[RMDB]
RNA sequence: GGGAACGACUCGAGUAGAGUCGAAAAGGGCGUCAUUUCGAUGACGCCCAUAGGUCUACUCCGAUUGGCGAGGACGACGCCGACGGGCGCGUUUGCCAAUCGCACCGUCCAGAUUCGUCUGGACGAACGAGGAUCAUGAGUUCGCUCAUGAUCCUCGAAAAGAAACAACAACAACAAC
Reactivity to DMS in 0.01 (KOAc 150mM, MgCl2 10mM, bicine 150mM(pH8.5), 24C), signal-to-noise 2, nucleotides 027 to 126: g030g000g010c010g030u020c000a000u000u010u010c170g020a020u000g000a000c010g000c000c000c000a000u010a030g010g000u000c020u000a050c010u000c020c000g020a030u000u000g000g020c000g010a100g010g040a040c000g000a170c000g030c010c010g000a170c300g010g000g060c010g020c010g000u000u000u000g030c010c010a000a000u000c010g020c060a080c140c010g000u000c010c020a020g000a020u000u020c160g020u000c000u000g000g000a010c010g000a040a060
Reactivity to 2A3 in 0.01 (KOAc 150mM, MgCl2 10mM, bicine 150mM(pH8.5), 24C), signal-to-noise 2, nucleotides 027 to 126: g010g000g020c010g020u020c020a000u050u100u170c210g090a010u010g000a000c010g000c000c000c000a000u010a000g000g010u020c010u020a010c000u000c010c000g000a010u000u000g010g000c010g010a110g130g070a080c020g060a160c000g030c000c010g150a300c220g100g040g000c020g000c000g000u010u010u100g020c000c000a000a010u010c000g000c010a030c030c010g000u000c000c000a000g000a010u020u060c180g020u000c050u000g000g000a010c000g010a020a040
The record gives the reactivity of an RNA of 177 nucleotides to DMS and 2A3. Conditions: 150 mM KOAc, 10 mM MgCl2 and 150 mM bicine (pH 8.5), 24 C. Source: RMDB library M2PK50, as collected in RNAgym. For 2A3 the reverse transcriptase was SuperScript II with manganese. High 2A3 reactivity points to a flexible backbone, as in loops and unpaired stretches. DMS adducts were read by reverse transcription with MarathonRT. Values cover nucleotides 27 to 126.